This 177-nucleotide RNA was probed chemically with 2A3 and DMS.
[RMDB]
RNA sequence: GGGAACGACUCGAGUAGAGUCGAAAAGAUAUGGACACGCUGAUGACCUAUCGCUAUCGGAAACGAUAGCGAGUAGCAAGGCGCGUCCUAAGUCAAACUCACGGACCAGUUCGCUGGUCCGUGAGAACGAAUAUACAAUCUUCGGAUUGUAUAUUCGAAAAGAAACAACAACAACAAC
Reactivity to 2A3 in 0.01 (KOAc 150mM, MgCl2 10mM, bicine 150mM(pH8.5), 24C), signal-to-noise 5, nucleotides 027 to 126: g010a000u040a010u110g000g000a010c010a000c040g010c040u050g030a260u270g130a300c020c020u010a010u010c000g000c010u010a000u000c010g030g010a070a020a030c010g000a010u000a000g010c000g000a000g010u020a010g010c010a020a040g010g000c000g000c000g000u000c010c000u010a040a010g010u000c010a040a050a110c000u000c000a000c000g000g000a000c000c000a000g010u090u100c290g120c120u010g000g000u000c000c000g000u000g000a000g000a000a000
Reactivity to DMS in 0.01 (KOAc 150mM, MgCl2 10mM, bicine 150mM(pH8.5), 24C), signal-to-noise 3, nucleotides 027 to 126: g000a040u000a220u000g000g010a010c000a020c000g010c010u010g010a160u020g010a140c300c010u000a030u000c010g000c000u000a010u000c000g000g000a080a050a050c000g010a010u000a000g010c000g000a010g000u010a000g010c030a170a280g000g000c010g020c010g000u000c000c000u000a020a070g000u000c010a100a090a180c000u000c000a000c000g000g000a020c000c000a010g000u000u010c260g010c000u010g000g000u000c000c000g010u000g000a000g010a030a100
Notes: The 2A3 profile rests on 29,583 reads. High 2A3 reactivity points to a flexible backbone, as in loops and unpaired stretches. Source: RMDB library TTRDEL, as collected in RNAgym. DMS adducts were read by reverse transcription with MarathonRT.